[RMDB]
RNA sequence: GGGAACGACUCGAGUAGAGUCGAAAAACCGCUUACGCCUUUUGCCGGUUAUCCGUCGAUUACCGAGCUAGCGAGCGAUGCCUCUUUUGACAACGCGCUGGUGGUAGAGGUCUCGGGGUUGACGCAAUCCCCUUACAUCGUUCGCGAUGUAAGGGGAAAAAGAAACAACAACAACAAC
Reactivity to DMS in 0.01 (KOAc 150mM, MgCl2 10mM, bicine 150mM(pH8.5), 24C), signal-to-noise 2, nucleotides 027 to 126: a050c020c000g000c060u000u000a090c200g000c040c040u000u000u000u000g010c080c000g010g010u020u020a110u010c110c090g000u010c090g000a060u000u010a110c020c000g010a090g020c060u010a080g000c050g010a050g030c020g030a100u010g010c010c020u040c220u000u000u000u000g020a080c100a050a070c110g010c030g020c070u000g010g020u000g020g000u000a050g000a070g010g010u020c050u000c050g000g000g000g000u000u020g000a080c020g000c240a090a140
Reactivity to 2A3 in 0.01 (KOAc 150mM, MgCl2 10mM, bicine 150mM(pH8.5), 24C), signal-to-noise 1, nucleotides 027 to 126: a010c000c000g010c000u040u100a020c040g010c000c040u020u110u150u160g060c070c000g050g020u000u000a050u030c060c060g130u050c050g050a040u010u100a180c010c000g000a030g040c020u050a020g000c060g050a060g060c040g020a030u040g020c070c010u090c030u060u150u050u140g070a050c060a190a030c050g070c000g000c020u050g040g130u080g080g100u100a070g000a050g050g110u090c030u030c000g030g000g010g010u030u070g020a000c000g000c040a030a090

The record gives the reactivity of an RNA of 177 nucleotides to DMS and 2A3. For DMS, 1,417 sequencing reads were counted. Source: RMDB library OK2TST, as collected in RNAgym.